[RMDB]
RNA sequence: GGGAACGACUCGAGUAGAGUCGAAAAAGAUGGUGAACUAUGCCUGGAUAGGGUGAAGUCAGAGGAAACUCUGAUGGAAGCUCGUAGCGGUUCUGACGUGCAAAUCGAUCGUAGAAUCUGGGUAUAGUCAUACAUAACGCUUCGGCGUUAUGUAUGAAAAAGAAACAACAACAACAAC
Reactivity to DMS in 0.01 (KOAc 150mM, MgCl2 10mM, bicine 150mM(pH8.5), 24C), signal-to-noise 8, nucleotides 027 to 126: a080g000a100u000g010g030u010g010a110a130c010u010a010u000g000c010c010u000g000g000a030u010a110g010g000g010u000g000a300a180g000u000c000a000g000a010g000g000a160a120a160c000u000c000u000g000a010u000g000g000a200a200g000c000u000c010g030u020a140g010c000g000g010u010u010c090u050g020a010c070g000u040g020c300a080a080a150u000c020g000a030u000c010g010u000a080g010a090a050u000c010u000g000g000g020u000a020u000a000g000
Reactivity to 2A3 in 0.01 (KOAc 150mM, MgCl2 10mM, bicine 150mM(pH8.5), 24C), signal-to-noise 8, nucleotides 027 to 126: a000g170a090u230g020g080u110g030a020a000c000u010a000u010g010c000c000u020g000g000a030u050a060g030g030g030u300g100a010a010g000u000c000a000g000a010g000g030a070a040a050c000u000c000u000g000a000u020g000g020a040a030g000c000u000c020g020u060a040g010c010g030g000u110u080c130u170g030a030c040g130u200g080c100a030a040a040u040c020g020a020u030c010g010u020a030g040a160a030u010c010u000g010g000g000u010a000u000a010g000

Background
An RNA of 177 nucleotides, treated with DMS and 2A3 and read out base by base. The reactions ran in a buffer of 150 mM KOAc, 10 mM MgCl2 and 150 mM bicine (pH 8.5), at 24 C.